Source: RMDB library RFM100, as collected in RNAgym. This 177-nucleotide RNA was probed chemically with DMS and 2A3. For DMS, 1,101 sequencing reads were counted.

[RMDB]
RNA sequence: GGGAACGACUCGAGUAGAGUCGAAAAGAGAGAUGGCGCCAAAUGCAAUCAUAUUGGUUUGGUACUAAUUAUGGUAGAAUUAAAGCUAAGCCAAUUUGGGCACCGGGUUUCAUCUCUCCUCGACUGAACGAAGGAUGGGAUUCGUCCCAUCCUUCGUAAAAGAAACAACAACAACAAC
Reactivity to DMS in 0.01 (KOAc 150mM, MgCl2 10mM, bicine 150mM(pH8.5), 24C), signal-to-noise 1, nucleotides 027 to 126: g000a010g000a070g000a000u030g020g030c120g000c000c000a050a080a300u020g000c060a030a010u130c000a120u000a030u050u000g000g040u000u000u000g040g120u000a200c180u000a000a000u000u000a050u030g000g040u030a130g000a000a000u000u000a070a300a300g000c060u000a000a000g000c000c000a000a000u000u000u050g000g000g000c050a070c230c300g000g050g000u000u000u000c000a000u000c000u010c000u010c000c010u000c170g000a070c030u040g000a230
Reactivity to 2A3 in 0.01 (KOAc 150mM, MgCl2 10mM, bicine 150mM(pH8.5), 24C), signal-to-noise 3, nucleotides 027 to 126: g020a000g000a000g000a000u000g000g000c020g050c010c010a030a070a040u110g000c030a000a200u200c000a050u030a000u040u000g010g000u010u000u000g020g000u060a040c060u000a030a020u060u070a090u300g270g020u180a070g150a120a010u000u000a020a080a070g000c000u010a000a000g020c000c000a000a020u040u020u000g010g000g000c010a030c040c050g000g010g010u000u020u000c010a000u000c000u000c000u000c000c030u020c000g130a120c050u100g110a020
2A3 is a SHAPE reagent: it acylates the 2'-hydroxyl of flexible nucleotides of all four kinds. Reactivities are given for positions 27 through 126. For 2A3 the reverse transcriptase was SuperScript II with manganese. Conditions: 150 mM KOAc, 10 mM MgCl2 and 150 mM bicine (pH 8.5), 24 C.